An RNA of 177 nucleotides, treated with 2A3 and DMS and read out base by base. For DMS, 1,487 sequencing reads were counted.
RNA sequence: GGGAACGACUCGAGUAGAGUCGAAAAUCGCGGUGGACAGUGUUCAAAAGUUUGAACUGGAGCGUUGGAGGGUGGGGCGGGUGUGGGGGAGGCCCAACGGUUUGGCAAACUUUAUUCAUUUGCCGCGCAGUUAUUAAUAGUUCGCUAUUAAUAACUGAAAAGAAACAACAACAACAAC
Reactivity to 2A3 in 0.01 (KOAc 150mM, MgCl2 10mM, bicine 150mM(pH8.5), 24C), signal-to-noise 2, nucleotides 027 to 126: u050c000g000c050g000g010u030g000g030a010c000a050g020u020g000u070u000c020a010a000a000a100g080u060u070u040g000a040a000c040u030g050g050a040g060c090g010u110u200g060g050a070g010g040g080u300g050g050g030g050c120g000g000g000u160g020u030g030g010g000g020g020a040g050g000c000c000c000a020a010c040g040g010u030u040u130g050g000c000a010a010a020c000u100u100u080a150u170u230c060a010u040u100u090g000c000c000g000c000g000
Reactivity to DMS in 0.01 (KOAc 150mM, MgCl2 10mM, bicine 150mM(pH8.5), 24C), signal-to-noise 1, nucleotides 027 to 126: u000c050g000c090g000g000u020g020g020a130c220a140g000u000g010u000u000c050a000a050a140a140g020u000u000u000g020a050a010c000u030g000g000a090g000c250g000u000u040g000g000a140g010g020g000u040g010g000g020g000c240g010g030g020u010g010u000g020g020g000g000g030a060g000g000c050c000c040a040a070c280g010g040u030u000u020g000g050c020a020a010a030c140u000u000u020a000u020u010c130a120u020u030u000g000c010c000g000c130g020